[RMDB]
RNA sequence: GGGAACGACUCGAGUAGAGUCGAAAAGUAAGAACACAACAGGUCAUCUUAAGUGUGAUUCAGAUGAGACUGCAUUCAGUGUCAUGGAGGGGACACACACAUAUAGGCCUCACAUGAGCUUUGAUAAAAAUCGCAAAAUAUUCGUAUUUUGCGAUUUAAAAGAAACAACAACAACAAC
Reactivity to 2A3 in 0.01 (KOAc 150mM, MgCl2 10mM, bicine 150mM(pH8.5), 24C), signal-to-noise 5, nucleotides 027 to 126: g040u050a060a030g050a100a020c060a010c020a180a000c000a030g000g030u020c010a030u000c050u080u100a090a060g020u030g050u050g100a140u060u080c020a010g010a040u020g010a020g120a120c000u020g000c050a100u080u190c080a030g030u020g070u070c010a020u030g040g030a100g060g010g000g020a010c020a010c000a000c010a000c030a070u160a010u040a180g060g050c010c010u010c000a040c000a030u020g000a010g010c030u100u110u100g030a020u180a040a210
Reactivity to DMS in 0.01 (KOAc 150mM, MgCl2 10mM, bicine 150mM(pH8.5), 24C), signal-to-noise 9, nucleotides 027 to 126: g010u010a080a070g010a120a120c070a060c070a080a120c110a040g000g000u000c030a050u000c060u000u000a300a080g010u000g000u000g000a150u000u010c090a070g010a030u010g000a030g000a060c020u000g010c230a090u000u010c090a040g020u000g000u000c020a020u000g010g010a090g010g000g000g010a090c050a040c040a020c050a050c130a080u010a090u010a110g010g000c010c000u000c040a050c100a050u000g010a070g010c040u000u000u000g010a100u010a030a060

Description: This 177-nucleotide RNA was probed chemically with 2A3 and DMS. Values are in units of 0.01, from 0 to 300, in steps of 10. The RNA was probed in 150 mM KOAc, 10 mM MgCl2 and 150 mM bicine (pH 8.5) at 24 C. 2A3 adducts were read by reverse transcription with SuperScript II with manganese. For DMS, 12,819 sequencing reads were counted.